[RMDB]
RNA sequence: GGGAACGACUCGAGUAGAGUCGAAAAAUAAGUGCAACGGAGAGACCCUUCCUUCCGGCACGGGCUGUACGACCCACACGGUGUAAAUAAGUAGAGGACUGCUUUGGAAGGUCAUAAUGUACAACAGAAUAAUCCGCUGGUUCGCCAGCGGAUUAUUAAAAGAAACAACAACAACAAC
Reactivity to 2A3 in 0.01 (KOAc 150mM, MgCl2 10mM, bicine 150mM(pH8.5), 24C), signal-to-noise 2, nucleotides 027 to 126: a000u090a000a160g020u000g030c020a100a030c000g000g000a070g000a030g000a100c120c000c000u000u120c000c050u010u090c020c000g010g000c050a030c030g010g000g000c040u090g040u090a020c060g000a050c050c000c010a070c000a030c040g080g000u090g000u060a060a300a300u090a170a000g010u090a000g050a010g070g130a210c000u030g000c000u140u100u170g030g050a100a110g030g000u050c000a050u120a300a020u090g050u050a010c000a020a000c000a120g080
Reactivity to DMS in 0.01 (KOAc 150mM, MgCl2 10mM, bicine 150mM(pH8.5), 24C), signal-to-noise 2, nucleotides 027 to 126: a000u030a060a050g010u030g020c050a030a090c140g080g010a050g000a040g030a070c030c070c070u000u000c040c000u000u000c000c040g000g020c020a060c060g000g000g000c060u000g030u000a080c000g010a060c030c000c020a130c060a080c180g000g050u000g010u010a040a110a120u000a050a070g050u000a000g000a150g000g020a170c020u000g000c020u000u010u050g020g010a050a030g000g000u030c080a050u000a110a100u000g000u000a050c180a090a050c230a140g000
The record gives the reactivity of an RNA of 177 nucleotides to 2A3 and DMS. It was measured as part of the RMDB library OK1LIB. 2A3 adducts were read by reverse transcription with SuperScript II with manganese. Values cover nucleotides 27 to 126. The RNA was probed in 150 mM KOAc, 10 mM MgCl2 and 150 mM bicine (pH 8.5) at 24 C.